Background
This 207-nucleotide RNA was probed chemically with 2A3 and DMS. Values cover nucleotides 27 to 156. The reactions ran in a buffer of 150 mM KOAc, 10 mM MgCl2 and 150 mM bicine (pH 8.5), at 24 C. For DMS, 2,688 sequencing reads were counted. The 2A3 profile rests on 1,296 reads. Source: RMDB library OK3TST, as collected in RNAgym.
RNA sequence: GGGAACGACUCGAGUAGAGUCGAAAAAAACAAGGAAGCAUCCUGAAGAAGGCAGUCCUAGGCAGGGUUGUGGGGAGGACAUUCCAGACACCACCAUGUGGGAAUAUUUGAACAAAGCCCUAGGAAUUCUAUUCUCUCAAACUUCAUCUACAGUUCACUUUACGGAACUAUUCGUAGUUCCGUAAAGAAAAGAAACAACAACAACAAC
Reactivity to 2A3 in 0.01 (KOAc 150mM, MgCl2 10mM, bicine 150mM(pH8.5), 24C), signal-to-noise 2, nucleotides 027 to 156: a000a000a000c080a030a000g040g010a050a000g070c020a060u030c020c030u040g010a030a010g040a000a020g040g000c020a010g040u020c020c000u020a050g020g000c040a010g060g040g000u040u040g050u020g020g010g020g000a010g030g030a010c000a080u100u050c020c000a020g040a060c040a030c020c010a020c030c050a090u180g010u040g020g050g040a020a020u070a050u100u120u130g010a060a010c060a050a060a000g000c000c000c010u000a030g000g010a000a000u040u010c040u020a050u010u040c020u020c010u000c030a030a050a140c050u070u090c020a100u020c010u060a060c010a030g020u010u080c030a000
Reactivity to DMS in 0.01 (KOAc 150mM, MgCl2 10mM, bicine 150mM(pH8.5), 24C), signal-to-noise 2, nucleotides 027 to 156: a040a040a080c040a040a050g020g030a100a080g020c080a130u010c050c010u000g010a110a090g010a090a040g020g000c090a090g020u000c030c010u000a090g010g010c030a120g020g000g010u000u000g000u000g070g000g030g010a150g020g010a080c080a090u010u000c010c020a210g000a050c020a080c060c010a040c040c100a100u020g000u000g010g000g000a030a050u000a060u000u010u000g010a160a110c060a080a060a120g020c030c030c020u000a140g020g000a030a040u000u000c090u030a050u000u000c030u000c000u000c030a050a080a040c060u000u020c060a050u000c010u000a060c030a170g000u000u000c030a110